[RMDB]
RNA sequence: GGGAACGACUCGAGUAGAGUCGAAAACCACAGAUCUUCGGAUCUGUGGAAACAACAAAUACUGUCAGAUGAGACAGACACAAAUACAUUGAGUGUACAAUGAAAGCGAUUGCUUCGGCAAUCGCAACUAGGAUAACAUGUUCGCAUGUUAUCCUAGAAAAGAAACAACAACAACAAC
Reactivity to DMS in 0.01 (KOAc 150mM, MgCl2 10mM, bicine 150mM(pH8.5), 24C), signal-to-noise 6, nucleotides 027 to 126: c010c000a010c000a000g010a010u000c000u000u000c220g050g010a000u000c010u010g010u000g000g000a020a070a070c100a090a080c080a080a070a120u010a130c010u000g010u000c000a120g010a140u010g010a160g010a020c000a010g000a160c140a030c110a050a090a090u010a110c090a050u000u000g000a170g030u000g010u010a100c120a060a030u000g010a080a080a090g010c000g000a010u000u000g020c000u000u000c160g020g000c010a000a000u000c000g000c000a010a030
Reactivity to 2A3 in 0.01 (KOAc 150mM, MgCl2 10mM, bicine 150mM(pH8.5), 24C), signal-to-noise 9, nucleotides 027 to 126: c000c000a000c000a000g000a000u000c010u080u190c270g130g000a010u000c000u000g000u000g000g000a050a060a010c040a020a000c010a020a110a040u200a160c010u010g000u010c010a040g060a300u130g070a170g010a150c010a000g050a020c020a000c000a030a160a020u270a040c050a050u050u120g060a060g160u140g030u090a050c040a050a100u130g100a220a070a020g000c000g000a000u000u000g000c000u030u070c220g050g000c000a000a000u000c000g000c000a000a000

Structure probing data (DMS and 2A3) for a 177-nucleotide construct. Reactivities are given for positions 27 through 126. The reactions ran in a buffer of 150 mM KOAc, 10 mM MgCl2 and 150 mM bicine (pH 8.5), at 24 C. The data come from the RNA Mapping Database (RMDB), library M2PK50. Reactivities are rounded to 0.1 and cut off at 0 and 3.